RNA sequence: GGGAACGACUCGAGUAGAGUCGAAAACUACAUAAAUUCGUUUAUGUAGCAUCGGGGACGCGCAGACUCCCCGUCUGACGGCUCUAGCCUUCCAAGCUCUGCACUCAACAGCUUUCGAGCUGUUGAAACUGUAAUUACCGUUCGCGGUAAUUACAGUAAAAGAAACAACAACAACAAC
Reactivity to 2A3 in 0.01 (KOAc 150mM, MgCl2 10mM, bicine 150mM(pH8.5), 24C), signal-to-noise 4, nucleotides 027 to 126: c000u010a000c000a010u010a020a030a020u060u060c140g040u050u000u000a010u000g010u000a000g010c040a080u130c020g010g000g000g000a010c070g090c020g000c240a010g010a030c020u000c010c000c010c000g010u010c050u050g050a030c030g000g010c010u060c120u220a090g010c010c020u080u050c040c030a030a010g020c040u000c010u020g000c010a030c040u020c000a010a000c000a010g030c000u070u080u250c270g140a000g000c000u010g000u000u000g000a030a020
Reactivity to DMS in 0.01 (KOAc 150mM, MgCl2 10mM, bicine 150mM(pH8.5), 24C), signal-to-noise 5, nucleotides 027 to 126: c010u010a000c000a010u010a000a000a030u000u010c180g010u000u000u000a000u000g000u000a010g010c070a110u000c040g020g010g010g000a010c140g010c130g010c020a020g010a020c060u000c010c000c000c020g010u000c070u010g010a170c080g000g010c010u010c160u010a120g020c020c030u000u010c090c110a050a060g000c080u010c000u000g020c010a230c250u000c000a010a000c000a000g010c010u000u000u000c190g000a010g030c000u000g020u000u000g000a010a070

An RNA of 177 nucleotides, treated with 2A3 and DMS and read out base by base. The RNA was probed in 150 mM KOAc, 10 mM MgCl2 and 150 mM bicine (pH 8.5) at 24 C. 2A3 adducts were read by reverse transcription with SuperScript II with manganese. For DMS the reverse transcriptase was MarathonRT.